[RMDB]
An RNA of 207 nucleotides, treated with 2A3 and read out base by base.
RNA sequence: GGGAACGACUCGAGUAGAGUCGAAAAAAAUCAUUAAAGAGUGGUUCAAAACAGUUAUCCAGGUGGGAAACCCCUAUAUCGGAUUUAAAGAUGCCAUAAAUCGUAAAAGUAAUCUUUCACAUGUAGGCACUAUCACGAACUCCAAUCUUUGUAUUGACCGAUGUAUCCAUUUCGAUGGAUACAUCGGAAAAGAAACAACAACAACAAC
Reactivity to 2A3 in 0.01 (KOAc 150mM, MgCl2 10mM, bicine 150mM(pH8.5), 24C), signal-to-noise 1, nucleotides 027 to 156: a000a000a060u110c060a010u050u300a020a040a010g000a030g060u000g090g000u060u040c060a000a010a140a180c030a100g070u070u030a030u020c030c000a000g000g060u040g030g030g060a070a090a110c030c010c010c000u040a070u040a000u230c070g000g060a040u000u000u030a030a130a000g010a080u030g030c000c000a060u080a230a110a030u180c130g000u010a030a030a030a030g000u030a090a040u140c000u030u090u030c060a040c010a030u030g070u130a010g000g030c000a000c130u030a030u230c090a010c170g000a000a060c080u060c010c070a010a140u020c010u010u020u040g130u040a070u030u060g000a040